[RMDB]
RNA sequence: GGGAACGACUCGAGUAGAGUCGAAAACUUAUUUGUGACUAUGGCCUUCGUUAUGUUGUUGGUUAAACACAAACACACCUUUUUGACACUUUUCUUGUUGCCUGUGGCUAUUUGUUUGACUUAUGCAUGAGACAGCUGUUCGCAGCUGUCAAAAGAAACAACAACAACAAC
Reactivity to 2A3 in 0.01 (KOAc 150mM, MgCl2 10mM, bicine 150mM(pH8.5), 24C), signal-to-noise 3, nucleotides 027 to 129: c010u100u060a030u050u160u050g010u000g060a030c010u030a000u110g040g010c010c000u070u100c050g060u060u050a000u160g040u050u090g000u020u010g090g000u040u100a100a140a000c130a040c030a000a250a050c040a000c000a090c030c010u000u050u000u040u070g000a070c020a010c030u040u030u040u040c020u030u080g020u050u000g060c010c010u070g000u020g000g000c000u020a070u050u010u030g070u040u080u130g030a000c000u050u120a100u300g000c010a080u030g010a000
Reactivity to DMS in 0.01 (KOAc 150mM, MgCl2 10mM, bicine 150mM(pH8.5), 24C), signal-to-noise 2, nucleotides 027 to 129: c050u040u050a040u030u010u030g010u000g000a110c000u000a110u030g000g000c000c050u020u020c130g020u010u040a080u030g000u000u000g000u030u000g040g020u000u050a030a040a040c100a040c080a030a070a060c160a010c000a140c070c020u000u010u030u000u040g020a060c100a100c040u000u000u000u060c020u010u010g050u000u020g000c020c060u050g070u070g070g000c120u000a040u000u000u000g030u040u000u010g030a100c130u030u020a020u040g000c060a050u040g040a160